[RMDB]
RNA sequence: GGGAACGACUCGAGUAGAGUCGAAAAAUCAUAUUGGAAGAAACAUGGGAUAUUAAUACAUUGGCUGCAUGUACAGAGGGAAGAUGAUGUGAAGACACGGAGAGAAGAUGGCCAUCUACAUGCUAAGGAGAGAGGCCUGGCCUGGAACAGAUCCUCACCCCGUAAUGGAUUUCGAUCCAUUACGGGGAAAAGAAACAACAACAACAAC
Reactivity to 2A3 in 0.01 (KOAc 150mM, MgCl2 10mM, bicine 150mM(pH8.5), 24C), signal-to-noise 1, nucleotides 027 to 156: a010u110c080a040u050a120u080u110g030g000a070a010g000a110a050a030c110a120u070g000g020g040a040u040a040u190u150a150a130u170a040c060a090u010u040g000g000c000u020g010c000a030u040g020u030a050c030a010g030a080g060g000g000a000a060g020a040u040g000a020u020g080u000g020a040a000g020a020c070a010c040g040g040a000g000a000g000a120a020g020a040u040g050g000c010c000a030u000c050u140a060c040a090u090g020c060u060a030a020g030g000a030g000a000g000a010g060g000c060c000u010g030g030c020c010u000g000g030a070a020c000a050g040a030u060c000c000u010c000a010